[RMDB]
RNA sequence: GGGAACGACUCGAGUAGAGUCGAAAAGCUGCGGGUGUGUGCUUUGUGACAAUGAGAUUCGGUUCGAUAUCAUCCCCUUGUUGCAAACCUCACGCUUGCGGUAAACAUUCGUUGUUCGCAACGAAUGGUUGUGCACAAAGUUCGCUUUGUGCACAACAAAAGAAACAACAACAACAAC
Reactivity to DMS in 0.01 (KOAc 150mM, MgCl2 10mM, bicine 150mM(pH8.5), 24C), signal-to-noise 1, nucleotides 027 to 126: g000c010u000g010c010g000g020g000u010g000u000g010u000g000c300u000u010u000g020u030g030a010c030a030a000u010g000a040g000a050u000u010c220g010g000u010u010c230g010a090u000a020u010c040a070u000c020c020c000c090u000u000g000u000u000g000c010a020a010a000c080c020u010c000a010c020g020c020u000u000g030c010g010g000u000a040a090a290c000a020u000u000c000g020u000u000g010u000u010c250g010c000a010a000c000g010a010a000u000g000
Reactivity to 2A3 in 0.01 (KOAc 150mM, MgCl2 10mM, bicine 150mM(pH8.5), 24C), signal-to-noise 3, nucleotides 027 to 126: g000c000u000g000c020g010g010g010u000g000u000g000u010g000c000u000u020u000g010u010g000a000c000a020a020u110g020a030g000a090u110u230c160g120g140u300u300c180g140a100u140a040u300c080a220u050c020c000c000c020u000u030g010u000u010g030c000a010a000a000c000c000u000c000a010c000g020c000u010u000g010c010g000g000u070a120a090a000c020a010u010u000c010g000u010u010g040u030u080c260g010c160a010a010c010g000a010a000u010g020
The data come from the RNA Mapping Database (RMDB), library RFMREP.
Chemical mapping of a 177-nucleotide RNA with DMS and 2A3.
For DMS the reverse transcriptase was MarathonRT.
As a SHAPE reagent, 2A3 marks flexible, mostly unpaired nucleotides at the ribose 2'-OH.